The record gives the reactivity of an RNA of 177 nucleotides to 2A3 and DMS.
RNA sequence: GGGAACGACUCGAGUAGAGUCGAAAACAGCCCCACCUUGCAGUACUUGGGUGGCACCUAUGAUCCGCUGGGACGUUACUCAAUUGCGUCGAUUCUGCCGCCGCAGGAUGCGUGGGAAAAAGGUGACUCUCAGGAGAAAUUUCGAUUUCUCCUGAGAAAAAGAAACAACAACAACAAC
Reactivity to 2A3 in 0.01 (KOAc 150mM, MgCl2 10mM, bicine 150mM(pH8.5), 24C), signal-to-noise 4, nucleotides 027 to 126: c010a040g070c000c010c010c000a030c010c020u030u110g010c030a020g040u110a120c020u060u050g030g000g000u000g000g000c010a020c010c040u130a160u260g060a090u080c040c030g050c080u050g060g000g030a060c060g070u050u120a100c050u040c110a110a220u150u120g010c010g020u040c040g050a040u130u000c010u030g010c020c010g070c030c050g040c010a010g000g040a030u050g030c030g030u110g050g020g000a080a020a040a000a000g040g010u060g020a070c040
Reactivity to DMS in 0.01 (KOAc 150mM, MgCl2 10mM, bicine 150mM(pH8.5), 24C), signal-to-noise 5, nucleotides 027 to 126: c150a190g010c040c010c010c050a040c030c030u000u000g020c060a060g020u000a080c060u010u000g010g000g010u000g000g020c020a070c180c060u010a060u000g000a100u000c060c050g030c070u000g000g000g010a140c140g000u000u000a060c090u000c100a070a080u010u010g000c020g010u010c060g000a100u000u000c060u000g010c000c080g010c090c090g020c180a030g000g010a060u000g010c030g010u010g020g020g000a040a040a060a070a040g010g020u000g010a140c210
It was measured as part of the RMDB library OK2TST. 2A3 adducts were read by reverse transcription with SuperScript II with manganese. The RNA was probed in 150 mM KOAc, 10 mM MgCl2 and 150 mM bicine (pH 8.5) at 24 C.